[RMDB]
RNA sequence: GGGAACGACUCGAGUAGAGUCGAAAAUUCAUCUCGGCGUAUUUCGGCUUGGAGAAAAUAUACCGUCCUGCUCAGCGAUAAUGACCUCCAUGCUUGACGUAAGUACAUGGCAAAUUGCACUGUCAGACGUGCUUAUUAGAUUCGUCUAAUAAGCACGAAAAGAAACAACAACAACAAC
Reactivity to 2A3 in 0.01 (KOAc 150mM, MgCl2 10mM, bicine 150mM(pH8.5), 24C), signal-to-noise 9, nucleotides 027 to 126: u050u030c020a090u020c020u020c030g050g010c030g030u090a110u040u110u060c050g040g010c030u020u060g060g010a040g030a040a080a030a000u210a010u040a060c020c020g030u050c020c010u030g040c020u030c050a020g030c020g070a040u060a150a090u150g060a060c010c000u000c010c000a030u050g010c020u040u110g050a060c040g040u030a040a050g030u020a040c040a090u060g020g000c020a030a070a130u100u080g010c030a020c080u020g030u040c020a010g010a090
Reactivity to DMS in 0.01 (KOAc 150mM, MgCl2 10mM, bicine 150mM(pH8.5), 24C), signal-to-noise 9, nucleotides 027 to 126: u010u020c070a110u010c030u000c050g010g010c040g010u010a060u010u010u010c060g000g020c040u000u000g000g000a070g010a080a060a090a070u020a110u030a100c060c030g010u000c030c030u010g010c040u000c060a080g020c040g000a080u010a050a060u010g000a150c100c020u000c020c020a060u010g010c030u010u010g010a050c110g010u020a050a070g010u010a060c080a060u010g000g010c080a050a060a080u020u010g010c060a060c070u010g010u000c020a070g000a230
Source information:
Source: RMDB libraries RFM100 and RFMREP, as collected in RNAgym. Chemical mapping of a 177-nucleotide RNA with 2A3 and DMS. High DMS reactivity at an A or C suggests that its Watson-Crick edge is free. Conditions: 150 mM KOAc, 10 mM MgCl2 and 150 mM bicine (pH 8.5), 24 C.